[RMDB]
RNA sequence: GGGAACGACUCGAGUAGAGUCGAAAACUCUGGGCUCUAAAAGCAAAAGAGCUGUUGGUUAGAUGCAGCAUCCAUAAGCACCUACUGUUUCCUAACUCACAGCAAGGCUAUUAUUGAGGCAGGUGGCACCUUGAGUCUCAUUCGUGAGACUCAAGGUAAAAGAAACAACAACAACAAC
Reactivity to DMS in 0.01 (KOAc 150mM, MgCl2 10mM, bicine 150mM(pH8.5), 24C), signal-to-noise 2, nucleotides 027 to 126: c030u000c040u020g010g000g000c020u010c020u000a060a040a120a110g010c060a080a100a150a110g010a230g010c000u000g010u000u000g020g020u000u000a010g000a060u000g000c010a010g000c020a070u010c060c080a090u010a040a100g030c140a060c060c050u000a050c040u000g020u010u000u000c140c030u000a030a020c030u000c240a040c040a040g030c020a110a110g020g000c030u000a000u010u000a060u020u000g020a060g000g040c010a030g000g000u010g010g010c130
Reactivity to 2A3 in 0.01 (KOAc 150mM, MgCl2 10mM, bicine 150mM(pH8.5), 24C), signal-to-noise 1, nucleotides 027 to 126: c020u000c010u000g020g080g040c010u050c000u050a100a130a020a030g030c020a170a130a100a060g090a020g000c010u030g030u070u100g030g070u020u020a010g010a030u080g000c000a000g000c000a060u080c050c010a100u100a170a090g080c060a080c030c020u070a020c020u050g010u010u050u060c040c000u000a000a000c000u000c040a020c020a000g010c010a020a030g140g000c020u040a060u210u000a100u020u240g010a050g050g040c020a010g000g040u020g040g040c030